[RMDB]
RNA sequence: GGGAACGACUCGAGUAGAGUCGAAAAGCUGUGACCCAGGCGAGAAUGCAGGUUGAUGCAGAGAGGAAGGAGCAGUCAUGUGUCAACUGCGGCCGGGAGGCCAUGAGUGAGUGCACCGGCUGCCACAAUCCGGAAGGAGGUUCGCCUCCUUCCGGAUAAAAGAAACAACAACAACAAC
Reactivity to DMS in 0.01 (KOAc 150mM, MgCl2 10mM, bicine 150mM(pH8.5), 24C), signal-to-noise 2, nucleotides 027 to 126: g020c030u000g000u000g000a230c040c000c010a150g010g000c040g000a070g000a070a080u010g010c090a010g020g000u000u010g030a070u010g020c050a030g000a130g030a130g010g000a100a090g040g000a090g000c050a040g010u010c040a140u000g020u000g010u000c090a080a050c080u010g030c060g000g000c000c000g010g000g020a150g010g010c010c000a050u000g000a160g020u020g020a190g000u000g000c020a100c030c130g000g000c010u010g000c010c180a070c080a080